[RMDB]
RNA sequence: GGGAACGACUCGAGUAGAGUCGAAAAGGCCUUAAUGGGGGCACCAUAUGCGCUAUUACUUGAAGUUAAUCAGUGUGAUACCACGGAAGCGGCAAUGGAGUUAAUUGCCGAGCAGGGUUGGCAGGGCUGAGAAUGUUGAAUUCGUUCAACAUUCUCAAAAAGAAACAACAACAACAAC
Reactivity to DMS in 0.01 (KOAc 150mM, MgCl2 10mM, bicine 150mM(pH8.5), 24C), signal-to-noise 6, nucleotides 027 to 126: g010g010c020c030u000u000a090a110u010g000g000g010g000g010c070a100c030c050a070u000a080u000g010c040g010c050u010a040u000u000a050c050u000u000g000a090a110g010u000u000a060a090u010c080a050g010u010g020u010g000a120u010a070c080c030a060c060g010g000a110a110g010c010g000g000c000a010a020u000g000g020a180g020u000u000a070a050u000u000g010c010c010g000a070g010c070a090g000g000g000u000u000g000g010c050a080g000g000g000c170
Reactivity to 2A3 in 0.01 (KOAc 150mM, MgCl2 10mM, bicine 150mM(pH8.5), 24C), signal-to-noise 2, nucleotides 027 to 126: g020g040c000c010u080u120a140a050u180g040g000g010g010g050c030a000c020c000a040u050a060u170g060c040g000c030u020a020u090u070a060c020u060u120g130a070a040g030u060u120a110a060u060c060a050g020u030g010u010g140a060u050a110c020c040a030c070g040g000a070a010g000c010g030g000c040a010a020u030g030g000a170g040u000u080a070a020u060u020g000c000c000g010a010g010c020a020g010g060g000u110u040g000g000c030a030g040g020g000c010